Structure probing data (DMS and 2A3) for a 207-nucleotide construct.

[RMDB]
RNA sequence: GGGAACGACUCGAGUAGAGUCGAAAAUUACUCUUGUUAGGUGAAAGUUGAUGGUCGCCGAGCCAGUCCGUACAUCCAAAAUGGACUCUAUGUAGUAGGAAGUCGAGAGCCUAUGAGAGUUAGAGUCAUGCCUAUUUUGUGUUCGCACAAAAUAGAAGACUUAAUUUACCUUCGGGUAAAUUAAGUCAAAAGAAACAACAACAACAAC
Reactivity to DMS in 0.01 (KOAc 150mM, MgCl2 10mM, bicine 150mM(pH8.5), 24C), signal-to-noise 3, nucleotides 027 to 156: u000u000a040c010u000c030u010u010g020u010u000a080g040g030u010g030a060a080a160g000u000u000g010a130u010g010g020u000c050g000c060c030g010a120g040c000c030a110g010u010c030c020g020u000a130c090a100u000c060c060a040a050a160a110u000g020g010a020c010u000c020u000a040u000g000u000a260g000u000a050g020g020a050a120g010u000c100g010a180g010a300g010c000c010u010a010u000g000a200g000a190g010u010u000a040g000a110g030u000c040a060u010g000c030c010u000a040u000u000u000u000g010u010g000u000u010c300g030c000a030c010a020a000a010a020u000a010g000a070a150
Reactivity to 2A3 in 0.01 (KOAc 150mM, MgCl2 10mM, bicine 150mM(pH8.5), 24C), signal-to-noise 4, nucleotides 027 to 156: u120u050a040c010u020c020u030u080g030u050u070a030g000g040u050g060a130a070a060g050u090u110g050a090u040g040g050u050c040g010c130c020g020a000g000c020c010a030g040u020c010c030g020u040a060c030a090u030c050c040a060a080a040a150u140g060g000a010c000u000c010u010a040u090g040u010a010g010u010a010g040g030a070a020g040u060c090g040a020g010a020g240c000c010u000a020u050g030a020g010a010g080u020u020a010g000a000g010u020c030a060u090g040c000c010u010a000u020u000u000u000g010u000g020u020u060c130g020c090a000c000a010a010a000a000u000a000g030a060a010
For 2A3, 2,617 sequencing reads were counted. Reactivities are given for positions 27 through 156. The reactions ran in a buffer of 150 mM KOAc, 10 mM MgCl2 and 150 mM bicine (pH 8.5), at 24 C. The DMS profile rests on 4,693 reads. Source: RMDB library M2RFPK, as collected in RNAgym. For 2A3 the reverse transcriptase was SuperScript II with manganese.